RNA sequence: GGGAACGACUCGAGUAGAGUCGAAAAUUUCUCCUAUUCGUAGGAGAAAGAAGGACCACCCGGGAGGGUUAAGGCCAUUCGGACAGCCGGGUCCACUGCCGAUAAGGGCUGAGUUCGCUCAGCCCAAACUACCAGAUAACUUCGGUUAUCUGGUAGUAAAAGAAACAACAACAACAAC
Reactivity to 2A3 in 0.01 (KOAc 150mM, MgCl2 10mM, bicine 150mM(pH8.5), 24C), signal-to-noise 2, nucleotides 027 to 126: u000u000u010c000u010c010c000u020a030u010u080c210g080u010a010g000g000a010g010a010a010a010g010a010a090g000g000a010c010c000a010c000c020c010g000g060g020a080g060g030g000u060u200a090a120g000g000c010c000a070u110u020c000g020g000a020c000a010g010c010c000g010g000g000u000c000c000a010c030u040g000c010c000g000a000u060a080a180g000g000g000c000u000g010a000g020u040u120c190g070c070u000c010a010g010c000c000c000a000a020
Reactivity to DMS in 0.01 (KOAc 150mM, MgCl2 10mM, bicine 150mM(pH8.5), 24C), signal-to-noise 4, nucleotides 027 to 126: u000u010u000c000u000c000c000u000a030u000u010c160g030u000a000g000g000a020g000a000a000a010g000a220a150g000g010a030c010c000a040c000c000c010g010g030g000a180g000g010g010u000u000a050a030g010g000c000c010a100u000u000c010g000g000a020c020a300g000c000c000g000g000g000u000c000c010a080c200u010g010c000c000g000a110u030a200a120g020g000g020c000u000g000a010g010u000u010c290g000c000u000c000a010g010c000c000c000a000a010
An RNA of 177 nucleotides, treated with 2A3 and DMS and read out base by base. It was measured as part of the RMDB library M2PK50. The reactions ran in a buffer of 150 mM KOAc, 10 mM MgCl2 and 150 mM bicine (pH 8.5), at 24 C. Reactivities are rounded to 0.1 and cut off at 0 and 3. For 2A3, 4,361 sequencing reads were counted.